An RNA of 177 nucleotides, treated with DMS and 2A3 and read out base by base. Conditions: 150 mM KOAc, 10 mM MgCl2 and 150 mM bicine (pH 8.5), 24 C. The data come from the RNA Mapping Database (RMDB), library OK1LIB. For 2A3 the reverse transcriptase was SuperScript II with manganese.
[RMDB]
RNA sequence: GGGAACGACUCGAGUAGAGUCGAAAAUAGCAUAGCUUCUUGUAUAUGCAAGUUAACAAAUGAAUCCGAUGGACAUUCUGAGUCACUUUACGGCAUUGGUUUUGGUUGUGUUAUCAUAACAAACCAACAAGUCCCGAAUGUUCGCAUUCGGGACUUGAAAAGAAACAACAACAACAAC
Reactivity to DMS in 0.01 (KOAc 150mM, MgCl2 10mM, bicine 150mM(pH8.5), 24C), signal-to-noise 1, nucleotides 027 to 126: u030a170g000c020a010u000a010g000c000u010u000c080u010u000g050u000a030u020a020u090g000c010a070a290g000u030u030a090a070c050a000a180a080u050g000a170a000u000c070c000g040a060u000g040g050a130c010a030u020u000c110u020g000a100g000u000c020a120c070u000u010u040a080c300g030g000c040a060u000u000g020g040u060u000u000u010g000g040u000u040g030u000g000u000u000a090u000c140a150u010a000a000c030a000a030a020c010c000a120a030
Reactivity to 2A3 in 0.01 (KOAc 150mM, MgCl2 10mM, bicine 150mM(pH8.5), 24C), signal-to-noise 1, nucleotides 027 to 126: u100a020g020c140a000u020a070g010c050u060u060c020u000u300g000u190a280u160a050u300g000c000a130a000g040u000u100a030a010c010a000a110a070u020g090a020a090u000c000c000g090a150u040g000g070a030c000a000u110u000c070u060g000a020g150u000c000a070c260u020u110u280a050c100g000g000c000a020u000u000g140g000u000u100u000u000g000g000u000u020g000u030g000u230u000a110u180c000a030u020a010a040c090a000a040a000c000c000a000a000